[RMDB]
RNA sequence: GGGAACGACUCGAGUAGAGUCGAAAACUAGGCAAAAGUAAUUGGCAAAGUAUUCUUCUCUUGUUUUGUAUUUUUUAUGGCUACAUAGUAGUUGUACAUAUUUAUAGGGUACAUAUAAUAUUUGUUAAAAGCAUACACUGUGUAAUGAUCAAAUCAGUCAUACCGUAAGGUUCGCCUUACGGUAUGAAAAAGAAACAACAACAACAAC
Reactivity to 2A3 in 0.01 (KOAc 150mM, MgCl2 10mM, bicine 150mM(pH8.5), 24C), signal-to-noise 2, nucleotides 027 to 156: c010u020a030g020g000c030a030a040a120a110g060u210a230a140u180u120g080g000c040a150a000a030g010u020a070u080u110c040u070u010c030u000c000u050u070g000u010u100u020u030g020u040a200u020u110u000u000u050u020a070u100g010g000c000u010a010c010a050u080a040g020u000a010g020u020u020g010u020a010c000a020u150a030u050u170u100a100u100a050g040g000g030u070a040c010a020u050a020u030a090a030u060a060u080u100u020g010u010u040a000a100a140a000g000c000a010u020a140c000a010c040u010g010u000g040u080a050a000u060g030a040u070c010a070a000a000u020c020a030g090
Reactivity to DMS in 0.01 (KOAc 150mM, MgCl2 10mM, bicine 150mM(pH8.5), 24C), signal-to-noise 2, nucleotides 027 to 156: c050u000a130g050g020c020a080a090a160a140g010u000a130a130u000u010g010g030c040a130a090a100g010u000a090u000u000c080u000u000c050u000c060u010u000g000u000u000u000u000g010u000a010u000u020u000u020u000u000a100u050g030g020c030u020a020c000a020u010a020g000u000a110g000u000u000g020u000a060c030a110u000a230u000u010u000a140u010a180g010g010g040u000a030c020a060u000a040u010a020a090u010a110u000u010u000g000u000u010a050a080a070a200g000c020a060u000a050c040a050c050u000g020u000g000u010a040a090u000g020a110u000c100a020a080a160u010c060a150g010